[RMDB]
RNA sequence: GGGAACGACUCGAGUAGAGUCGAAAAGUUCAACGAGUCUAAAGGCUUCGGUUUCAUCACUCCUGCUGAUGGUAGCAAAGACGUUUUCGUUCACUUCUCUGCCAUUCAGGGCGCUGGUUUCAAAACUAGACUUCUUAUUUUUCGAAAUAAGAAGUCUAAAAGAAACAACAACAACAAC
Reactivity to DMS in 0.01 (KOAc 150mM, MgCl2 10mM, bicine 150mM(pH8.5), 24C), signal-to-noise 4, nucleotides 027 to 126: g010u030u010c090a080a090c040g000a040g010u010c030u000a100a100a180g000g010c020u010u020c060g010g020u010u000u010c030a050u010c090a060c070u000c020c020u020g030c220u000g010a040u000g010g030u010a020g020c300a040a040a040g010a050c080g000u010u000u020u000c070g010u020u010c100a100c080u000u010c070u000c020u000g000c050c020a030u000u010c050a020g000g000g040c110g000c070u000g010g000u000u000u020c070a030a090a090a120c300u000
Reactivity to 2A3 in 0.01 (KOAc 150mM, MgCl2 10mM, bicine 150mM(pH8.5), 24C), signal-to-noise 7, nucleotides 027 to 126: g020u050u080c040a070a020c040g030a020g030u010c040u210a200a100a090g040g020c030u110u100c060g070g040u030u070u060c030a040u050c010a010c040u060c010c020u050g010c030u040g030a040u010g020g050u020a020g020c070a050a050a040g070a050c040g000u080u030u070u130c070g010u110u170c060a030c050u060u030c020u010c000u070g000c010c000a040u120u100c020a050g020g020g030c040g000c040u040g000g040u000u050u050c040a070a070a010a010c030u000